[RMDB]
RNA sequence: GGGAACGACUCGAGUAGAGUCGAAAAACAGUACCAGCUGCUACGGCAGUUGGUACUGAACUUUCAUGGAGUUAAGAAACCACGUAAACAAAGCGGAACCGAAAAGCUAAACGAGUAGGAAGAAUAAAUAGGUACCACCACUUCGGUGGUGGUACAACCAUAUUCGGUCGUUCGCGACCGAAUAUGGAAAAGAAACAACAACAACAAC
Reactivity to 2A3 in 0.01 (KOAc 150mM, MgCl2 10mM, bicine 150mM(pH8.5), 24C), signal-to-noise 2, nucleotides 027 to 156: a000c010a000g000u000a010c000c010a000g030c010u000g000c000u030a040c140g120g000c000a000g010u000u000g000g000u000a010c000u010g000a000a000c010u030u150u130c040a090u110g090g020a020g040u130u040a190a040g090a080a050a020c010c030a020c050g060u100a050a020a220c080a150a140a000g000c000g030g010a020a140c010c000g010a020a020a010a000g000c010u160a160a080a000c010g010a000g010u010a000g160g000a090a050g080a050a110u300a130a040a010u200a060g130g030u020a000c000c000a000c000c000a010c000u010u000c240g090g010u010g000g000u000g000g000u000a000c000a000a000